Source information
An RNA of 177 nucleotides, treated with DMS and read out base by base. Reactivities are given for positions 27 through 126.

[RMDB]
RNA sequence: GGGAACGACUCGAGUAGAGUCGAAAAAGACUACGAAAACAACUUAAAUUAUGCCUAUGACGAUAAUCAUAUGCGUAAGUUACGGGUAGAACGUCUUGAAAAUGGUGAGGCAAUUUCUACAGCACCAAGGGCAUACUAUGUUCGCAUAGUAUGCCCUAAAAGAAACAACAACAACAAC
Reactivity to DMS in 0.01 (KOAc 150mM, MgCl2 10mM, bicine 150mM(pH8.5), 24C), signal-to-noise 1, nucleotides 027 to 126: a010g030a080c000u020a290c070g010a020a090a070a160c130a020a080c040u000u000a000a040a080u000u000a000u000g000c000c060u000a020u000g000a000c230g010a230u010a110a200u000c000a010u000a000u000g020c010g110u000a000a000g020u020u020a020c180g000g040g000u000a070g010a030a080c140g010u000c040u010u000g020a030a030a000a090u000g020g000u000g000a030g000g000c150a030a150u010u020u010c060u000a090c030a040g000c020a000c030c050a050

The RNA was probed in 150 mM KOAc, 10 mM MgCl2 and 150 mM bicine (pH 8.5) at 24 C.